Notes
This 207-nucleotide RNA was probed chemically with 2A3 and DMS. The RNA was probed in 150 mM KOAc, 10 mM MgCl2 and 150 mM bicine (pH 8.5) at 24 C. The 2A3 profile rests on 1,080 reads. The DMS profile rests on 1,795 reads. Source: RMDB library M2RFPK, as collected in RNAgym.
RNA sequence: GGGAACGACUCGAGUAGAGUCGAAAAGGAUGUCCCGACCGGAGGCCGACAAUCCAGCGAACCGGAUGUCAUCACGUUGUUGCAGUACCAGAUGGCAUCUUAAAUCCGAUCUGCAAAUAAGCAUGUAAAAACCGGCAUACGUUCGCGUAUGCCGGAACACUAGAUGUUCGUUCGCGAACAUCUAGUGAAAAGAAACAACAACAACAAC
Reactivity to 2A3 in 0.01 (KOAc 150mM, MgCl2 10mM, bicine 150mM(pH8.5), 24C), signal-to-noise 2, nucleotides 027 to 156: g050g010a050u060g050u070c030c000c010g030a080c030c050g040g050a000g000g050c090c030g070a020c040a030a120u030c020c020a040g020c010g070a060a010c000c020g050g000a000u000g010u000c000a000u020c010a000c090g090u060u100g030u130u050g000c030a020g040u090a140c030c010a070g000a020u010g000g000c000a000u000c000u020u090a080a110a010u010c040c020g050a070u040c000u040g020c010a020a090a140u190a080a000g030c070a020u060g000u300a040a060a100a070a040c020c000g000g000c000a000u000a000c000g040u000u030c120g000c000g180u000a000u020g040c010c000g000g000a000a000
Reactivity to DMS in 0.01 (KOAc 150mM, MgCl2 10mM, bicine 150mM(pH8.5), 24C), signal-to-noise 1, nucleotides 027 to 156: g030g060a140u040g000u010c010c020c000g040a090c030c020g030g000a110g050g040c000c000g000a180c040a150a170u000c000c020a060g000c010g000a120a040c080c020g000g000a070u010g000u010c010a030u000c040a200c260g010u000u010g000u010u000g000c010a070g000u000a100c070c050a180g000a120u000g000g020c020a030u000c030u000u000a040a170a090u000c040c010g000a080u000c030u000g000c040a060a100a070u000a080a080g010c090a070u000g000u000a050a080a040a150a190c000c000g000g010c000a030u000a000c020g030u000u000c270g070c000g030u000a010u000g020c080c010g000g010a000a030